An RNA of 170 nucleotides, treated with 2A3 and DMS and read out base by base.
DMS adducts were read by reverse transcription with MarathonRT.
Conditions: 150 mM KOAc, 10 mM MgCl2 and 150 mM bicine (pH 8.5), 24 C.
2A3 adducts were read by reverse transcription with SuperScript II with manganese.

RNA sequence: GGGAACGACUCGAGUAGAGUCGAAAAGUUCGUUACGACUUGUAUGAUGGUAACAUGUUUAUUAAAUUUCCUGAAGUAGUAUUUGAAAGUACACUUAGGAUUACUAGAACUCUGUCAACUCAGUACUAUACUGUAUCGUUCGCGAUACAGAAAAGAAACAACAACAACAAC
Reactivity to 2A3 in 0.01 (KOAc 150mM, MgCl2 10mM, bicine 150mM(pH8.5), 24C), signal-to-noise 9, nucleotides 027 to 129: g010u030u080c040g030u050u080a040c050g010a020c030u050u030g070u120a140u110g120a030u110g100g010u040a060a010c020a070u070g070u050u090u030a250u030u160a110a130a140u050u040u010c000c000u050g080a040a010g000u200a010g000u000a060u050u110u160g250a190a120a010g010u000a000c010a000c010u010u020a000g010g000a020u030u030a040c050u020a030g070a100a030c020u010c030u080g040u050c020a020a070c030u020c050a010g030u020a010c030u030a040u040a110
Reactivity to DMS in 0.01 (KOAc 150mM, MgCl2 10mM, bicine 150mM(pH8.5), 24C), signal-to-noise 8, nucleotides 027 to 129: g020u020u030c150g000u000u000a050c110g020a090c060u000u000g030u000a080u030g030a070u040g020g020u030a030a040c080a110u030g000u030u020u010a110u080u000a080a110a060u000u000u000c010c010u030g000a020a010g040u030a040g000u000a000u010u050u060g000a120a120a030g030u030a010c100a020c040u010u000a040g000g010a060u030u040a080c170u040a000g020a050a110c080u000c070u050g000u060c070a100a080c100u000c060a090g030u000a030c050u040a040u020a110